RNA sequence: GGGAACGACUCGAGUAGAGUCGAAAAUUGCGCUUGCCUAUUUAGGCAUACUUCUCAGGAUGGCGCGUUGCAGUCCAACAAGAUCCAGGGACUGUACAGAAUUUUCCUAUACCUCGAGUCGGGGUUGAAAACGUUAGGCACUUCGGUGCCUAACGAACGGAUUAAGCAUCUUCGGAUGCUUAAUCCGAAAAGAAACAACAACAACAAC
Reactivity to 2A3 in 0.01 (KOAc 150mM, MgCl2 10mM, bicine 150mM(pH8.5), 24C), signal-to-noise 2, nucleotides 027 to 156: u040u040g010c000g000c000u050u090g030c010c010u180a280u220u220u300a030g020g000c000a010u060a050c040u150u090c110u050c190a130g120g030a100u120g040g000c020g000c020g030u000u050g000c000a000g010u000c030c020a030a000c050a270a100g130a300u090c060c100a060g000g000g000a000c000u000g000u000a020c000a070g140a080a040u000u000u000u010c000c000u010a030u000a090c020c040u000c000g000a000g000u010c030g000g020g000g000u010u030g030a080a090a010a000c000g030u000u000a000g000g020c000a000c010u030u010c250g080g000u010g000c010c000u000a000a000c000g000a010a000
Chemical mapping of a 207-nucleotide RNA with 2A3. Source: RMDB library M2RFPK, as collected in RNAgym. Reactivities are given for positions 27 through 156. The reactions ran in a buffer of 150 mM KOAc, 10 mM MgCl2 and 150 mM bicine (pH 8.5), at 24 C.